Structure probing data (2A3 and DMS) for a 177-nucleotide construct. It was measured as part of the RMDB library OK1LIB. For DMS the reverse transcriptase was MarathonRT.
[RMDB]
RNA sequence: GGGAACGACUCGAGUAGAGUCGAAAACGAUACUGCAUUGAUCGCAUGUAGACUAUUGCAGCGUCGCAUGGUCGAUGCUCGUAGUCUGUAUUAGUGUUCGACCAUGAUACUAAUGCGAUCAAUGCAAGGUACUGCAGGAUUUCGAUCUUGUAGUACCAAAAGAAACAACAACAACAAC
Reactivity to 2A3 in 0.01 (KOAc 150mM, MgCl2 10mM, bicine 150mM(pH8.5), 24C), signal-to-noise 9, nucleotides 027 to 126: c030g030a070u130a170c050u040g000c000a000u000u000g000a000u000c000g010c010a010u040g070u120a010g010a010c010u030a030u130u300g060c160a010g010c010g010u000c000g000c080a210u240g120g020u250c000g000a000u000g000c000u000c000g000u000a010g050u010c040u030g020u010a050u010u020a040g100u010g070u080u130c090g040a090c060c030a050u120g000a000u010a010c020u070a070a000u010g000c000g000a000u000c000a000a000u000g000c000a000a000
Reactivity to DMS in 0.01 (KOAc 150mM, MgCl2 10mM, bicine 150mM(pH8.5), 24C), signal-to-noise 8, nucleotides 027 to 126: c060g010a140u060a070c160u010g000c000a010u000u000g000a000u000c000g010c010a070u020g010u030a030g000a010c000u000a010u010u030g040c170a010g020c010g030u000c010g010c010a280u030g010g010u050c010g000a010u000g010c010u000c010g000u000a010g000u000c000u000g010u010a040u020u000a010g020u010g010u010u020c190g000a130c250c100a080u020g000a010u000a010c000u020a040a030u000g010c010g000a000u000c000a000a000u000g000c010a010a010

For 2A3 the reverse transcriptase was SuperScript II with manganese.